Conditions: 150 mM KOAc, 10 mM MgCl2 and 150 mM bicine (pH 8.5), 24 C. Chemical mapping of a 177-nucleotide RNA with DMS and 2A3. For DMS, 20,660 sequencing reads were counted. Reactivities are given for positions 27 through 126. High DMS reactivity at an A or C suggests that its Watson-Crick edge is free.
[RMDB]
RNA sequence: GGGAACGACUCGAGUAGAGUCGAAAACUGGCGUAAGUGCUUUUGCCUAAACAAAUCGCUAAAGUGUCUUUAGGCAUUUUAAAAUACUCUAUCGUAUGGGCUAGAGCGAACGCGUUAGCCGGCAAGACCUACCACUAAUAUUCGUAUUAGUGGUAGGAAAAGAAACAACAACAACAAC
Reactivity to DMS in 0.01 (KOAc 150mM, MgCl2 10mM, bicine 150mM(pH8.5), 24C), signal-to-noise 9, nucleotides 027 to 126: c030u000g010g010c010g020u000a080a140g020u010g020c020u000u000u000u000g000c000c010u000a050a080a060c120a070a100a090u000c150g010c160u000a020a020a040g020u000g010u000c040u000u010u000a090g010g010c030a010u000u000u000u000a020a080a090a070u000a050c090u010c150u010a090u010c110g020u010a070u000g000g000g010c030u000a020g010a010g010c010g010a060a060c140g010c030g000u000u000a050g010c030c030g010g010c150a050a070g000a180
Reactivity to 2A3 in 0.01 (KOAc 150mM, MgCl2 10mM, bicine 150mM(pH8.5), 24C), signal-to-noise 9, nucleotides 027 to 126: c010u010g020g000c010g020u070a150a130g040u050g080c000u020u020u020u060g000c010c000u030a040a040a020c060a030a110a050u160c080g010c110u070a030a020a020g030u020g020u020c030u070u220u110a110g000g000c010a020u020u010u020u040a080a110a010a010u140a060c060u070c070u160a110u220c080g030u030a060u100g010g020g000c010u020a000g000a000g020c010g010a060a010c030g000c000g010u010u020a020g060c010c000g050g040c050a060a020g040a060